[RMDB]
An RNA of 207 nucleotides, treated with 2A3 and DMS and read out base by base.
For 2A3, 3,010 sequencing reads were counted.
The DMS profile rests on 7,521 reads.
The reactions ran in a buffer of 150 mM KOAc, 10 mM MgCl2 and 150 mM bicine (pH 8.5), at 24 C.

RNA sequence: GGGAACGACUCGAGUAGAGUCGAAAACACAACUGGAUGGGCCGUGUGCUUAACCAGGACAAGAUCUCCUUCUCUCCAACGUUGUUGCCAACUCAUGAUUCUCCUAACCUGUGCUUGGAGAGACGUGCUACCAUAUAGGUGUUCGCACCUAUAUGAACUUAACUAAAUAGUUCGCUAUUUAGUUAAGAAAAGAAACAACAACAACAAC
Reactivity to 2A3 in 0.01 (KOAc 150mM, MgCl2 10mM, bicine 150mM(pH8.5), 24C), signal-to-noise 4, nucleotides 027 to 156: c090a010c030a040a120c020u030g000g010a060u030g090g030g040c070c090g240u240g110u300g130c010u040u050a070a080c000c000a010g030g030a010c090a050a070g030a130u030c030u030c020c000u060u020c020u000c010u020c020c000a060a040c100g030u030u000g030u010u030g050c050c030a090a050c080u050c070a050u090g070a240u170u030c040u020c040c000u070a060a080c040c070u140g090u160g110c060u040u040g000g000a010g000a000g010a010c030g020u040g040c010u080a090c030c000a000u000a000u000a010g000g010u010g010u030u040c170g010c070a000c020c010u010a000u010a000u000g000a020a020
Reactivity to DMS in 0.01 (KOAc 150mM, MgCl2 10mM, bicine 150mM(pH8.5), 24C), signal-to-noise 2, nucleotides 027 to 156: c050a040c020a050a100c020u000g010g020a180u000g000g000g030c020c050g000u020g040u010g000c000u000u000a060a110c030c020a050g020g020a150c070a080a110g000a120u010c020u000c020c050u000u000c020u000c010u000c020c020a040a110c130g020u000u000g010u000u000g000c000c050a070a110c060u000c030a040u010g000a130u010u000c020u000c020c020u000a070a060c000c040u000g010u000g000c030u000u010g020g000a030g000a040g020a050c030g010u000g020c010u010a160c090c000a020u000a010u000a000g010g010u000g030u000u010c290g020c010a020c000c000u000a010u010a010u000g000a080a150